[RMDB]
RNA sequence: GGGAACGACUCGAGUAGAGUCGAAAAGAUAUGGAUGAGUGGGAGAGCAUACUCGGAAACGAGUAGCUCUUUGAUCACUAUCCUAAGUCAAAACGUCAGAUUACAACUUCGGUUGUAAUCUGACGAAGAAUAGAAUGUUGUUCGCAACAUUCUAUUCAAAAGAAACAACAACAACAAC
Reactivity to DMS in 0.01 (KOAc 150mM, MgCl2 10mM, bicine 150mM(pH8.5), 24C), signal-to-noise 7, nucleotides 027 to 126: g000a040u000a300u010g000g010a000u000g000a020g040u010g010g010g000a010g000a010g020c000a120u000a020c000u000c000g000g000a070a110a170c000g010a010g010u000a020g000c000u000c000u000u000u000g000a080u010c000a000c010u000a060u000c000c000u000a050a170g010u000c040a070a070a110a190c010g000u000c000a010g000a010u000u000a000c000a000a000c000u000u010c200g030g010u000u010g000u000a000a000u000c000u000g000a000c000g000a010a040
Reactivity to 2A3 in 0.01 (KOAc 150mM, MgCl2 10mM, bicine 150mM(pH8.5), 24C), signal-to-noise 6, nucleotides 027 to 126: g020a020u080a040u130g010g000a010u060g100a050g020u020g010g040g010a010g000a000g000c050a270u020a050c000u000c000g010g030a070a080a020c010g010a000g000u000a010g000c000u000c000u040u030u020g060a060u070c000a000c000u010a000u000c000c000u020a170a020g080u050c050a030a020a080a100c010g000u000c000a000g000a010u000u000a000c010a020a000c020u070u140c300g180g000u000u000g000u000a000a000u000c000u000g000a010c000g000a010a000

Source: RMDB library TTRDEL, as collected in RNAgym. This 177-nucleotide RNA was probed chemically with DMS and 2A3. The reactions ran in a buffer of 150 mM KOAc, 10 mM MgCl2 and 150 mM bicine (pH 8.5), at 24 C. 2A3 adducts were read by reverse transcription with SuperScript II with manganese. For DMS the reverse transcriptase was MarathonRT. Reactivities are given for positions 27 through 126. The DMS profile rests on 14,884 reads.